[RMDB]
RNA sequence: GGGAACGACUCGAGUAGAGUCGAAAAGAUAUGGAAUGUCGUGCCGGACGAAGAACUGGUGUCGGAAACGACACCAGGGAGUCCGUGCACGAGCAUUCCUAAGUCAAAACGUAGCUUCGGCUACGAAGAUUCUCGACAAGUUCGCUUGUCGAGAAUCAAAAGAAACAACAACAACAAC
Reactivity to 2A3 in 0.01 (KOAc 150mM, MgCl2 10mM, bicine 150mM(pH8.5), 24C), signal-to-noise 1, nucleotides 027 to 126: g000a020u060a020u140g000g000a020a030u010g030u060c020g000u000g030c060c020g010g000a010c040g250a300a060g000a020a040c010u010g030g000u010g020u000c020g000g090a020a060a060c050g010a010c000a010c000c000a000g020g000g000a000g000u000c000c000g010u110g000c010a000c000g010a010g000c000a000u000u000c000c000u000a040a020g030u010c040a040a070a060a110c020g020u000a000g020c000u080u020c300g200g000c000u010a000c000g000a030a000
Reactivity to DMS in 0.01 (KOAc 150mM, MgCl2 10mM, bicine 150mM(pH8.5), 24C), signal-to-noise 2, nucleotides 027 to 126: g020a020u010a300u000g000g000a020a000u010g000u000c010g040u010g020c000c000g000g010a010c050g020a160a210g010a170a270c010u000g010g000u030g000u000c000g000g000a150a110a150c000g000a000c000a000c000c010a020g030g000g000a040g050u000c010c000g030u000g000c040a000c010g010a020g020c010a010u000u010c000c000u000a030a080g030u000c040a080a090a100a230c030g020u000a020g020c010u010u010c210g000g000c000u000a020c000g020a070a090